[RMDB]
RNA sequence: GGGAACGACUCGAGUAGAGUCGAAAACAGCAUUCGUGCUGACCUUCACCUUUGUGGAUAGGGAGCGACGUCGAGGCUUGAGCCCAUUGGGCUCAAGAACUACCUCGACCACUCGCGAAGAACUAUCCACUCUGGUAUGUUUCAUGUUCGCAUGAAAAAUCCGGCUAUUUUUCGAAAUAGCCGGAUUAAAAGAAACAACAACAACAAC
Reactivity to 2A3 in 0.01 (KOAc 150mM, MgCl2 10mM, bicine 150mM(pH8.5), 24C), signal-to-noise 1, nucleotides 027 to 156: c020a000g040c020a050u050u120c260g130u130g010c010u030g050a060c000c000u090u150c060a030c000c000u000u000u010g000u010g030g000a000u000a000g030g000g020a000g000c000g000a040c300g020u000c000g000a000g000g030c020u000u000g000a000g000c000c020c060a130u130u300g000g000g000c010u010c000a010a000g000a030a010c070u210a060c020c000u020c000g000a000c000c000a070c000u000c000g010c020g030a220a030g010a020a010c000u000a000u000c000c000a000c000u000c010u010g000g020u080a160u180g160u000u040u030c020a010u020g060u030u110c270g020c090a000u100g260a020a000a220